[RMDB]
RNA sequence: GGGAACGACUCGAGUAGAGUCGAAAAGGUGUCCGUCGUCUACUUCGUCACGCCGCUCUUCAACGGCCUCGGGGUGUCCGCGAUAUGGGCCGUGCUCACCGUCGUCGUCGUCAUGGAGUACACCGUCCUAAAACAAAUAGUUCGCUAUUUGUUUUAGAAAAGAAACAACAACAACAAC
Reactivity to DMS in 0.01 (KOAc 150mM, MgCl2 10mM, bicine 150mM(pH8.5), 24C), signal-to-noise 9, nucleotides 027 to 126: g010g010u000g010u000c050c040g010u000c050g020u000c050u010a070c060u000u000c050g010u010c080a100c210g010c040c030g000c060u000c070u000u000c150a100a090c040g000g010c010c030u000c060g010g000g010g020u000g010u000c080c070g010c120g010a110u010a080u010g010g010g010c030c050g010u000g000c070u000c040a080c070c040g010u000c040g020u000c070g010u000c030g010u000c060a100u010g000g000a100g010u010a070c060a080c030c020g000u000c070
Reactivity to 2A3 in 0.01 (KOAc 150mM, MgCl2 10mM, bicine 150mM(pH8.5), 24C), signal-to-noise 9, nucleotides 027 to 126: g060g010u040g020u060c030c020g030u010c010g020u010c060u060a070c030u050u050c020g050u040c020a010c070g030c020c010g050c020u030c010u160u120c050a060a030c020g010g010c000c010u040c030g040g000g000g020u070g050u040c020c020g040c030g030a030u050a110u240g030g030g000c020c020g010u030g010c020u030c020a040c020c020g070u050c020g010u010c010g020u000c000g020u010c020a060u120g040g020a030g030u040a030c020a030c040c010g060u080c000
An RNA of 177 nucleotides, treated with DMS and 2A3 and read out base by base. 2A3 adducts were read by reverse transcription with SuperScript II with manganese. The reactions ran in a buffer of 150 mM KOAc, 10 mM MgCl2 and 150 mM bicine (pH 8.5), at 24 C. It was measured as part of the RMDB library OK2TST. For DMS the reverse transcriptase was MarathonRT.